[RMDB]
RNA sequence: GGGAACGACUCGAGUAGAGUCGAAAACAGUAUUGAUUAAACACAGUUGGUGUCGCCUAUGUUAACGUCAAAUAUAAAGUAUUGGUCAUGGACUGGCGCGUUUAUAUUAUCGCUACUGUUCUGGGCCAAGUCUUAUAGCGUUCGCGCUAUAAGACUUAAAAGAAACAACAACAACAAC
Reactivity to 2A3 in 0.01 (KOAc 150mM, MgCl2 10mM, bicine 150mM(pH8.5), 24C), signal-to-noise 4, nucleotides 027 to 126: c010a010g080u070a100u070u110g090a110u090u150a070a120a000c060a030c000a050g110u090u060g060g030u010g030u060c050g030c000c000u060a060u110g090u060u040a130a010c070g000u020c050a020a090a020u230a050u070a140a130a010g080u030a120u050u090g000g000u020c050a070u040g010g000a000c000u010g030g020c030g010c000g070u020u110u030a150u030a050u030u090a040u050c000g000c000u000a010c020u010g040u090u000c020u040g010g000g000c000c040
Reactivity to DMS in 0.01 (KOAc 150mM, MgCl2 10mM, bicine 150mM(pH8.5), 24C), signal-to-noise 4, nucleotides 027 to 126: c050a070g000u010a050u010u020g010a070u010u020a150a050a090c090a060c070a060g010u000u020g010g000u010g030u000c050g010c070c020u010a100u030g000u000u010a060a140c250g020u000c060a020a070a080u020a070u020a080a110a130g010u030a120u020u000g010g000u010c040a240u020g020g020a000c030u000g000g000c070g000c060g000u020u000u020a040u030a110u020u000a040u020c040g010c030u000a010c020u000g010u000u000c020u010g000g010g020c040c040